[RMDB]
RNA sequence: GGGAACGACUCGAGUAGAGUCGAAAAACCUGCACUUCGGUGCAGGUAUAACAACCUUUGUGGCCCAUCGGAGACAUGACCUACCCAUUGGGUAGGUGGUGUCGUAGAUGAUGGGAACUACCACUCUGGUCCAAGCCGAGUGCUUCGGCACUCGGAAUCAACGAAUCCUGUUCGCAGGAUUCGUUGAAAAAGAAACAACAACAACAAC
Reactivity to 2A3 in 0.01 (KOAc 150mM, MgCl2 10mM, bicine 150mM(pH8.5), 24C), signal-to-noise 1, nucleotides 027 to 156: a000c000c000u020g000c020a000c000u000u040c300g090g010u010g020c000a000g000g000u010a000u020a000a050c040a000a050c000c000u040u000u000g010u010g030g030c000c000c000a000u000c000g000g010a090g000a020c010a020u040g250a000c000c000u000a000c000c000c050a300u160u300g000g000g000u020a000g010g000u010g020g010u000g000u010c000g000u040a000g000a020u030g000a020u020g010g000g040a020a080c080u110a070c040c000a010c000u000c020u040g000g050u030c060c050a030a040g090c000c000g010a000g010u000g000c000u040u100c290g110g000c000a000c000u030c000g000g010a000a070